This 207-nucleotide RNA was probed chemically with DMS and 2A3. The RNA was probed in 150 mM KOAc, 10 mM MgCl2 and 150 mM bicine (pH 8.5) at 24 C. DMS adducts were read by reverse transcription with MarathonRT. The DMS profile rests on 2,803 reads. Source: RMDB library OK3TST, as collected in RNAgym.

RNA sequence: GGGAACGACUCGAGUAGAGUCGAAAACAGGACCUGGUGGACUGGCGAAAGCCUCUCCUGUGGCAGGUGGGCCACUUGGGAGAGAAGUACGAUGAGUGGGUUCACCAGCCGGUGACCAGGCCCAUCCGCCUCUUCCACUCAGACCUCAUUGAGGGCAGCCUCCAUAUAAUUUCGAUUAUAUGGAGGCAAAAGAAACAACAACAACAAC
Reactivity to DMS in 0.01 (KOAc 150mM, MgCl2 10mM, bicine 150mM(pH8.5), 24C), signal-to-noise 1, nucleotides 027 to 156: c040a190g010g000a050c030c000u000g040g030u010g020g020a050c030u000g030g050c010g000a130a080a140g010c060c000u000c000u000c000c000u000g040u000g000g030c010a100g030g020u010g010g110g030c010c010a060c020u000u020g030g000g000a080g000a030g000a050a130g010u010a080c100g010a110u010g010a100g020u000g000g030g020u010u000c010a020c010c000a090g050c040c060g000g040u000g020a090c020c030a070g010g010c000c020c010a060u000c040c040g000c020c030u000c020u010u010c000c010a050c010u000c020a130g010a100c030c010u000c040a240u000u010g020a050g020g000g000c050a220
Reactivity to 2A3 in 0.01 (KOAc 150mM, MgCl2 10mM, bicine 150mM(pH8.5), 24C), signal-to-noise 4, nucleotides 027 to 156: c040a030g020g040a070c000c000u010g010g020u020g040g150a020c010u000g010g000c030g060a060a050a000g020c020c000u000c000u010c000c030u070g000u010g010g000c040a060g020g170u110g030g080g020c010c010a030c050u100u180g030g020g000a010g000a000g010a070a020g060u080a040c090g050a130u060g030a020g060u100g030g100g020u160u150c020a020c020c000a000g010c010c030g000g000u000g010a000c000c000a010g020g020c000c010c000a040u040c020c020g040c010c000u050c030u090u010c020c010a050c050u090c040a050g040a210c020c030u050c050a180u100u240g000a050g000g010g000c010a010